[RMDB]
RNA sequence: GGGAACGACUCGAGUAGAGUCGAAAAAAGCCUUAUGGUUGCCACAGGGUAUUAGGAGCAUGGAGACCAAUAAUGGAUGUCCUUGUUCUGAUUUGAGGAUGCCUCCAAGGUCACAUACUCUGUUUGCCUAGUACAGUCGUUUCGACGACUGUACUAGAAAAGAAACAACAACAACAAC
Reactivity to 2A3 in 0.01 (KOAc 150mM, MgCl2 10mM, bicine 150mM(pH8.5), 24C), signal-to-noise 2, nucleotides 027 to 126: a000a000g140c090c010u220u130a210u240g070g000u120u110g000c000c000a030c070a030g000g000g000u050a030u040u210a080g080g010a000g020c000a030u020g000g020a090g030a110c000c040a120a150u300a180a130u100g030g030a110u060g040u000c000c000u000u060g070u140u030c130u140g160a260u080u130u200g000a030g030g010a040u050g000c000c000u000c000c020a030a030g000g050u020c000a000c010a020u020a000c000u000c030u020g050u000u140u050g090c000
Reactivity to DMS in 0.01 (KOAc 150mM, MgCl2 10mM, bicine 150mM(pH8.5), 24C), signal-to-noise 4, nucleotides 027 to 126: a080a060g000c000c010u010u000a100u010g020g020u000u000g020c020c100a080c110a080g000g000g010u000a050u010u000a200g010g000a020g010c010a040u010g010g010a170g000a120c010c030a070a100u010a100a130u000g020g000a080u000g000u000c000c010u000u010g010u000u010c190u010g000a100u000u010u000g000a060g010g000a040u000g000c170c090u000c030c060a060a140g000g020u000c020a050c090a010u000a020c000u000c010u000g000u010u000u020g000c170
Background: This 177-nucleotide RNA was probed chemically with 2A3 and DMS. Conditions: 150 mM KOAc, 10 mM MgCl2 and 150 mM bicine (pH 8.5), 24 C. The 2A3 profile rests on 1,166 reads.